Background:
This 207-nucleotide RNA was probed chemically with DMS and 2A3. Conditions: 150 mM KOAc, 10 mM MgCl2 and 150 mM bicine (pH 8.5), 24 C. Reactivities are rounded to 0.1 and cut off at 0 and 3. In probing experiments dimethyl sulfate is read out at A N1 and C N3, which are open when not base-paired. The DMS profile rests on 4,541 reads. For 2A3, 3,775 sequencing reads were counted. 2A3 adducts were read by reverse transcription with SuperScript II with manganese.
RNA sequence: GGGAACGACUCGAGUAGAGUCGAAAAGGGACUGGCCCGCUGAAGCCCGGCAACCUAACUUUAUUUAAGCGUAAAGUGAAGGUGCUAAUUCCAGCAAAAUGGUGUAUUCCGUUUUGGUAGAUAAGAGAAGCGUGACAUGAGUUCGCUCAUGUCACAACCUUUAUUCUUCGUUCGCGAAGAAUAAAGGAAAAGAAACAACAACAACAAC
Reactivity to DMS in 0.01 (KOAc 150mM, MgCl2 10mM, bicine 150mM(pH8.5), 24C), signal-to-noise 2, nucleotides 027 to 156: g000g010g000a110c040u010g010g030c020c020c010g030c040u010g000a120a120g030c040c000c030g030g020c000a070a040c030c000u000a180a020c000u000u000u000a000u000u010u000a150a190g020c300g010u000a020a010a020g010u000g000a070a030g030g010u010g030c010u000a030a150u010u000c010c010a060g000c010a020a050a040a030u000g000g010u010g040u010a100u000u000c030c000g020u000u000u000u000g000g020u010a040g020a100u000a080a120g000a200g000a100a150g020c110g020u000g000a010c000a000u000g000a030g020u010u010c300g040c030u000c010a010u010g010u000c000a010c010a030a040
Reactivity to 2A3 in 0.01 (KOAc 150mM, MgCl2 10mM, bicine 150mM(pH8.5), 24C), signal-to-noise 5, nucleotides 027 to 156: g010g000g030a010c030u020g060g030c020c020c020g000c050u040g080a080a030g020c010c010c000g020g010c030a130a100c000c000u000a000a000c000u020u020u020a050u070u150u170a170a060g130c060g050u000a000a000a000g010u020g070a130a040g000g010u000g000c000u000a020a050u090u010c020c020a000g000c000a040a010a040a020u040g030g030u080g040u140a100u140u090c010c030g010u010u010u020u030g050g020u060a090g030a190u160a210a090g050a020g050a150a020g080c040g080u000g000a000c000a000u010g000a000g010u050u120c170g040c070u010c000a000u000g000u010c000a000c000a000a000